[RMDB]
RNA sequence: GGGAACGACUCGAGUAGAGUCGAAAAUGCACUCCAGCCUGGGCAACAGAGUGAGACUCCGUCUCAAAAACAAACAAACAAACAAAAGUAAUACAGGUUGAAUAUCCCUUAUUUGAAGUGUUUUGGAUUUCAGAUUGUUUGUUUUUUGAGACGGAGUAUCCUUUUCACUCUUCGGAGUGAAAAGGAUAAAAGAAACAACAACAACAAC
Reactivity to 2A3 in 0.01 (KOAc 150mM, MgCl2 10mM, bicine 150mM(pH8.5), 24C), signal-to-noise 2, nucleotides 027 to 156: u080g000c000a010c030u030c010c010a030g030c000c000u060g010g020g010c020a100a080c030a050g050a000g060u090g040a080g030a020c010u000c000c010g000u000c000u000c000a000a000a000a000a000c010a010a010a000c050a010a060a000c010a000a050a000c010a000a050a110a070g080u080a080a030u060a050c070a040g000g060u050u090g040a060a070u130a100u080c020c000c010u030u050a100u030u130u100g090a080a020g060u040g010u070u070u070u120g090g010a070u040u090u250c120a170g030a200u000u050g000u010u000u000g070u000u060u000u000u050u050g010a020g000a000c010g000g000a000g000u000
Reactivity to DMS in 0.01 (KOAc 150mM, MgCl2 10mM, bicine 150mM(pH8.5), 24C), signal-to-noise 1, nucleotides 027 to 156: u000g040c020a010c010u010c010c010a140g000c010c040u000g010g010g010c010a110a100c060a050g000a040g030u000g010a150g000a090c020u000c000c000g020u010c000u000c010a010a020a000a030a000c050a010a020a050c030a010a070a220c070a080a060a130c050a040a090a070a170g000u000a060a110u000a110c070a030g020g010u000u000g010a060a070u000a100u000c040c020c010u000u000a100u000u000u000g000a060a030g020u000g010u000u000u000u010g020g000a160u020u000u020c070a100g030a150u000u000g000u000u000u000g000u010u000u010u010u000u040g000a070g020a020c010g000g000a000g000u000
Overview
An RNA of 207 nucleotides, treated with 2A3 and DMS and read out base by base. The 2A3 profile rests on 728 reads. For DMS, 2,354 sequencing reads were counted. 2A3 adducts were read by reverse transcription with SuperScript II with manganese. The reactions ran in a buffer of 150 mM KOAc, 10 mM MgCl2 and 150 mM bicine (pH 8.5), at 24 C.